This 177-nucleotide RNA was probed chemically with DMS and 2A3.
For DMS the reverse transcriptase was MarathonRT.
The DMS profile rests on 3,173 reads.
The RNA was probed in 150 mM KOAc, 10 mM MgCl2 and 150 mM bicine (pH 8.5) at 24 C.
RNA sequence: GGGAACGACUCGAGUAGAGUCGAAAAGAUAUGGAUGUUGUGAUGAACAUCGAUCUAACUCGGAAACGAGUUAGGGAGUUCGCACACUGCAUCCUAAGUCAAAGGAGUAUCGUUCGCGAUACUCCAACCAAUGUGGGAAGUUCGCUUCCCACAUUGGAAAAGAAACAACAACAACAAC
Reactivity to DMS in 0.01 (KOAc 150mM, MgCl2 10mM, bicine 150mM(pH8.5), 24C), signal-to-noise 4, nucleotides 027 to 126: g010a020u000a300u000g000g000a000u030g010u000u000g000u000g020a230u020g030a040a050c040a260u010c170g000a170u020c000u000a000a010c000u000c010g020g010a090a080a220c010g020a010g010u000u000a010g000g000g020a100g000u000u000c040g010c100a090c020a030c300u010g000c000a000u000c000c000u010a050a140g010u000c040a060a150a130g020g010a010g000u000a010u000c010g030u000u010c270g020c000g010a010u000a000c000u000c020c000a030a080
Reactivity to 2A3 in 0.01 (KOAc 150mM, MgCl2 10mM, bicine 150mM(pH8.5), 24C), signal-to-noise 5, nucleotides 027 to 126: g020a000u050a010u100g000g000a010u010g000u060u020g040u030g080a300u070g050a190a070c070a300u300c080g010a020u010c010u000a010a000c000u000c000g000g000a030a020a020c010g000a010g000u000u000a010g020g020g010a060g040u280u300c230g000c060a080c010a000c040u040g000c000a010u000c000c000u020a090a020g020u030c080a110a100a140g020g010a000g000u010a010u010c020g030u060u180c300g000c000g170a000u000a000c000u000c010c000a000a000